[RMDB]
RNA sequence: GGGAACGACUCGAGUAGAGUCGAAAAGAUAUGGAGCAGAGGGAGCUGGGCAUCGGAAACGAUGCUUUCAGCGUUGAUCUCUGAACUACUCCUAAGUCAAACUUCUGGGGCUUCGGCCCCAGAAGAACUAUAUAGCUUUGUUCGCAAAGCUAUAUAGAAAAGAAACAACAACAACAAC
Reactivity to 2A3 in 0.01 (KOAc 150mM, MgCl2 10mM, bicine 150mM(pH8.5), 24C), signal-to-noise 1, nucleotides 027 to 126: g000a010u010a000u050g010g000a000g000c000a000g020a010g000g000g020a030g000c010u000g020g030g010c000a000u000c010g000g010a000a000a000c010g010a010u020g020c040u020u080u120c010a010g000c010g020u050u010g000a010u000c010u010c000u000g010a060a010c020u110a050c010u000c010c000u000a010a000g010u020c020a050a130a130c010u010u040c000u010g020g050g000g000c010u110u130c300g140g010c060c000c040c000a000g000a010a000g000a000a000
Reactivity to DMS in 0.01 (KOAc 150mM, MgCl2 10mM, bicine 150mM(pH8.5), 24C), signal-to-noise 3, nucleotides 027 to 126: g000a020u010a030u000g000g010a010g010c010a000g000a030g000g010g000a000g030c000u000g000g000g000c000a000u000c010g020g010a020a010a030c000g010a010u000g010c000u000u000u020c020a010g050c000g010u010u010g000a100u010c000u000c010u010g000a080a130c240u010a220c020u000c000c000u000a020a150g000u000c000a110a170a220c000u000u000c000u000g000g000g020g000c010u000u020c300g050g030c020c000c000c000a000g000a010a000g000a040a120
Source: RMDB library TTRDEL, as collected in RNAgym.
The record gives the reactivity of an RNA of 177 nucleotides to 2A3 and DMS.
The RNA was probed in 150 mM KOAc, 10 mM MgCl2 and 150 mM bicine (pH 8.5) at 24 C.
2A3 adducts were read by reverse transcription with SuperScript II with manganese.